[RMDB]
RNA sequence: GGGAACGACUCGAGUAGAGUCGAAAAGGAGGAGAGGGUGCGAAUGGCGCUGGGAGUGGCUCAGGGGAUGCAGGCGCUGGAGGCAGCGGAGCCGCCAAUCCUGCACCGCGACCUCAAGCCCUCCAACACCUCUGAGCAUAUUCGUAUGCUCAGAGGUAAAAGAAACAACAACAACAAC
Reactivity to DMS in 0.01 (KOAc 150mM, MgCl2 10mM, bicine 150mM(pH8.5), 24C), signal-to-noise 3, nucleotides 027 to 126: g010g000a050g010g000a140g030a110g030g000g000u000g040c060g010a090a080u000g020g010c080g050c110u000g010g000g000a100g030u000g030g000c010u000c120a120g020g000g010g000a140u010g010c060a010g000g010c140g010c060u010g010g000a050g000g000c140a100g000c130g010g010a110g010c030c020g060c010c050a080a110u000c040c000u010g000c010a070c020c000g010c040g010a090c020c010u000c050a090a070g030c030c020c000u000c040c010a120a070c140
Reactivity to 2A3 in 0.01 (KOAc 150mM, MgCl2 10mM, bicine 150mM(pH8.5), 24C), signal-to-noise 2, nucleotides 027 to 126: g020g010a030g010g050a080g000a050g030g060g020u090g060c000g050a160a080u110g060g020c050g000c080u090g020g020g010a080g030u190g000g010c020u000c070a080g000g010g000g040a020u100g000c040a060g040g010c040g000c060u030g010g020a020g030g060c020a010g030c060g090g060a050g000c060c010g010c010c000a030a050u080c000c000u010g000c000a010c010c010g050c030g040a040c000c000u020c000a000a020g000c000c000c000u000c010c010a060a020c020
Structure probing data (DMS and 2A3) for a 177-nucleotide construct. For 2A3, 2,765 sequencing reads were counted. DMS adducts were read by reverse transcription with MarathonRT. The reactions ran in a buffer of 150 mM KOAc, 10 mM MgCl2 and 150 mM bicine (pH 8.5), at 24 C.